[RMDB]
RNA sequence: GGGAACGACUCGAGUAGAGUCGAAAAGCGUACUACGAAGCGUCUACAGGCGUUGAAACCCAUAUUGGACUCUCCCAAAUAGGAGAGUCAGGUGGGUGGAGCCUGUAGUUCGCUUCGUAUCGCAAAAGAUGCUCUCUCCUUCGGGAGAGAGCAUCAAGUUAAUAAUUACCUUCGGGUAAUUAUUAACAAAAGAAACAACAACAACAAC
Reactivity to DMS in 0.01 (KOAc 150mM, MgCl2 10mM, bicine 150mM(pH8.5), 24C), signal-to-noise 1, nucleotides 027 to 156: g030c010g040u010a030c130u000a000c000g040a030a020g000c010g030u000c000u000a030c000a000g020g000c020g000u000u010g010a180a300a120c000c000c000a050u000a120u000u010g040g000a040c000u000c000u000c000c000c020a050a170a270u000a050g000g000a030g020a020g000u000c000a000g020g060u000g010g000g000u000g020g000a300g000c010c030u010g000u000a000g000u000u000c000g000c000u000u000c010g010u010a010u000c040g030c020a080a060a090a180g000a000u000g000c000u010c000u000c010u000c000c010u020u000c300g030g000g020a040g010a010g020a000g010c000a010u000c000a020a150
Reactivity to 2A3 in 0.01 (KOAc 150mM, MgCl2 10mM, bicine 150mM(pH8.5), 24C), signal-to-noise 3, nucleotides 027 to 156: g000c010g020u080a070c020u000a000c040g000a000a000g000c010g010u010c000u010a010c010a000g000g000c010g150u180u050g030a020a000a010c000c000c000a020u080a270u080u120g190g000a010c000u010c000u030c030c000c020a140a290a120u270a150g000g000a010g000a000g010u000c000a000g030g000u010g000g010g000u010g000g000a010g000c010c000u000g000u010a010g000u020u020c000g010c000u010u000c000g010u010a010u020c020g010c010a010a000a020a070g000a000u000g000c000u010c000u000c000u000c010c000u030u090c200g050g010g000a000g000a000g000a000g010c010a000u000c000a000a000